[RMDB]
RNA sequence: GGGAACGACUCGAGUAGAGUCGAAAAUCAGCAUCACUCCAAUCAAUCAGACUCGGUGGUCUCGAAAACGCAGUCGAACACUCAGCCCACAACGACCUGCCACUCCGCACAGUGGGCUUUACAACUUACUACGGACCAUCACUGUGCAAGUACUGUCCCCAUAAAUGCGGUUCGCCGCAUUUAUGGGAAAAGAAACAACAACAACAAC
Reactivity to 2A3 in 0.01 (KOAc 150mM, MgCl2 10mM, bicine 150mM(pH8.5), 24C), signal-to-noise 2, nucleotides 027 to 156: u030c020a010g100c010a000u090c030a060c050u040c050c060a080a090u150c030a030a020u040c010a000g040a190c030u010c130g050g030u060g150g000u000c110u020c090g090a100a100a100a000c070g010c070a040g080u050c010g060a090a000c040a000c050u100c060a030g030c000c010c010a070c010a000a080c040g030a040c000c080u030g000c050c000a120c060u050c030c100g000c000a030c030a050g020u040g010g000g020c010u000u050u050a060c000a110a000c030u050u130a010c020u020a000c000g060g000a060c000c020a060u160c050a020c030u000g030u050g000c020a070a000g010u040a120c130u090g070u160c020
The data come from the RNA Mapping Database (RMDB), library OK3TST. Chemical mapping of a 207-nucleotide RNA with 2A3. The RNA was probed in 150 mM KOAc, 10 mM MgCl2 and 150 mM bicine (pH 8.5) at 24 C. For 2A3, 637 sequencing reads were counted.